[RMDB]
RNA sequence: GGGAACGACUCGAGUAGAGUCGAAAAGGUUAUUUCUUCAAUGCGACAACUAAUUAUAAAAGCACCGAAGAGGGCUUUCGGCGAUAUUGACAGGCAGCUGCAUUUGUGCCCGGAAAGCGCGAAGUGUAUGAAUAAUCCAUUUCGAUGGAUUAUUCAUAAAAGAAACAACAACAACAAC
Reactivity to DMS in 0.01 (KOAc 150mM, MgCl2 10mM, bicine 150mM(pH8.5), 24C), signal-to-noise 5, nucleotides 027 to 126: g020g000u010u000a050u000u000u000c010u000u000c040a070a090u010g010c010g000a070c070a060a140c090u020a070a080u040u020a100u020a070a100a120a140g010c010a030c040c050g000a050a070g000a110g020g000g010c010u010u000u000c010g000g010c050g000a070u020a040u030u000g000a130c070a040g000g000c050a060g010c030u000g000c030a050u000u000u020g020u020g010c010c030c050g000g010a040a070a070g000c060g000c050g010a060a100g020u000g010u000
Reactivity to 2A3 in 0.01 (KOAc 150mM, MgCl2 10mM, bicine 150mM(pH8.5), 24C), signal-to-noise 7, nucleotides 027 to 126: g100g010u090u050a080u060u070u020c010u050u050c020a030a090u080g020c020g070a040c050a060a020c050u130a090a170u300u100a120u080a210a120a010a010g030c030a050c060c020g020a060a050g060a030g050g020g000c000u010u010u020c020g040g000c040g030a050u020a090u170u100g090a070c020a030g000g080c010a020g010c020u020g000c000a020u020u020u170g030u050g030c020c020c000g030g040a110a030a020g020c040g000c010g060a050a020g040u070g020u050
About this RNA: The data come from the RNA Mapping Database (RMDB), libraries RFM100 and RFMREP. An RNA of 177 nucleotides, treated with DMS and 2A3 and read out base by base. Reactivities are given for positions 27 through 126. For DMS the reverse transcriptase was MarathonRT. The RNA was probed in 150 mM KOAc, 10 mM MgCl2 and 150 mM bicine (pH 8.5) at 24 C.